About this RNA: Chemical mapping of a 177-nucleotide RNA with 2A3 and DMS. Reactivities are given for positions 27 through 126. Source: RMDB library OK2TRN, as collected in RNAgym. The DMS profile rests on 1,556 reads. For 2A3, 1,500 sequencing reads were counted.
RNA sequence: GGGAACGACUCGAGUAGAGUCGAAAAUCGGCGGAUAUCGACGCAUGGCUCGCGCGGCUCACGUUCGCGACGCUGCGCCCGAUGCUCGACGGCCCGCGCGCGCGUGCCAUGCGCGCUGGUGGGACGAGAUCGAGGGGCAGUUCGCUGCCCCUCGAUCAAAAGAAACAACAACAACAAC
Reactivity to 2A3 in 0.01 (KOAc 150mM, MgCl2 10mM, bicine 150mM(pH8.5), 24C), signal-to-noise 1, nucleotides 027 to 126: u060c000g000g000c030g030g020a080u050a030u300c110g180a150c020g020c020a030u020g030g000c000u000c000g000c000g000c030g080g000c050u060c070a110c050g030u130u150c060g000c010g070a030c050g020c080u060g010c030g020c010c010c010g050a060u090g030c000u030c060g070a140c010g030g010c010c080c000g010c020g000c010g000c010g010c000g000u020g040c030c030a050u010g000c020g020c000g010c010u040g050g030u060g030g020g000a000c020g040a020
Reactivity to DMS in 0.01 (KOAc 150mM, MgCl2 10mM, bicine 150mM(pH8.5), 24C), signal-to-noise 1, nucleotides 027 to 126: u000c030g040g020c050g010g000a120u010a080u010c040g000a300c040g000c000a020u010g010g010c010u000c010g000c020g000c010g010g000c040u000c130a130c100g010u010u000c090g020c070g010a070c120g020c010u000g020c080g000c050c050c010g010a120u010g020c040u000c000g010a120c030g000g010c030c060c080g010c060g020c010g000c010g010c020g010u000g030c050c050a000u000g010c000g000c010g010c010u000g010g000u000g000g000g040a150c090g010a180